[RMDB]
RNA sequence: GGGAACGACUCGAGUAGAGUCGAAAAUGGAGUGAUUUGUCUGCUUAAUUGCGAUAACGAACGAGACCUUAACCUACUAAAUAGGGUUGCUGGCACUUGCCGGUUGACUCUUCUUAGAGGGACUAUCGGUUUCAAGCCGAUGGAAGUUUGAGGCAAUCAAGUGUACUCACUUCGGUGAGUACACUUGAAAAGAAACAACAACAACAAC
Reactivity to 2A3 in 0.01 (KOAc 150mM, MgCl2 10mM, bicine 150mM(pH8.5), 24C), signal-to-noise 2, nucleotides 027 to 156: u120g010g010a070g040u080g050a170u080u110u100g100u060c110u160g000c010u100u150a140a150u300u030g000c000g030a040u070a130a130c020g000a080a030c070g030a050g050a110c030c000u020u030a030a040c010c000u120a280c000u000a300a050a060u070a040g030g010g000u010u000g010c010u020g000g000c020a120c300u110u240g010c000c000g030g000u100u240g010a000c000u000c000u020u030c000u010u010a010g010a040g000g000g040a000c000u030a000u010c010g000g020u020u260u300c090a050a010g000c000c000g000a010u010g000g000a070a060g000u030u160u090g020a000g010g000c000a000a080u040
Record summary: This 207-nucleotide RNA was probed chemically with 2A3. Source: RMDB library PDB130, as collected in RNAgym. Conditions: 150 mM KOAc, 10 mM MgCl2 and 150 mM bicine (pH 8.5), 24 C. For 2A3, 772 sequencing reads were counted.